The record gives the reactivity of an RNA of 177 nucleotides to DMS and 2A3.
DMS adducts were read by reverse transcription with MarathonRT.
Values cover nucleotides 27 to 126.
2A3 is a SHAPE reagent: it acylates the 2'-hydroxyl of flexible nucleotides of all four kinds.
It was measured as part of the RMDB library M2PK90.
[RMDB]
RNA sequence: GGGAACGACUCGAGUAGAGUCGAAAAAGAAAGAGAGCGUAGCACACACACAGACAAAGUCUGACACACACCUACGCUACAUGUGUGUGUGAAGUCGAGAUAUCGACAAGUGUGUGUGAUGAAAAAACCUUUCUUAAGGGUUCGCCCUUAAGAAAGGAAAAGAAACAACAACAACAAC
Reactivity to DMS in 0.01 (KOAc 150mM, MgCl2 10mM, bicine 150mM(pH8.5), 24C), signal-to-noise 4, nucleotides 027 to 126: a090g010a040a050a080g000a070g010a090g020c020g010u000a020g000c000a010c000a000c000a000c010a030c000a030g010a030c020a130a110a170g000u000c000u000g010a070c000a020c010a010c000a000c000c020u000a010c030g010c150u010a050c130a030u000g000u000g010u000g010u000g020u000g010a010a100g000u000c000g010a030g000a190u010a080u000c010g010a010c010a040a040g020u000g020u000g010u000g010u000g010a070u010g000a010a040a070a050a080a070
Reactivity to 2A3 in 0.01 (KOAc 150mM, MgCl2 10mM, bicine 150mM(pH8.5), 24C), signal-to-noise 4, nucleotides 027 to 126: a000g080a020a040a000g110a000g000a010g060c020g000u010a000g010c000a000c000a000c000a000c000a000c010a000g030a020c050a070a220a020g030u020c010u020g040a000c000a010c000a000c010a000c020c010u040a020c010g030c060u060a020c020a040u060g040u000g000u000g000u000g000u000g030a020a000g000u010c010g010a010g020a150u190a070u170c010g010a010c020a090a150g010u000g000u000g000u000g000u000g010a020u040g040a030a080a010a000a000a020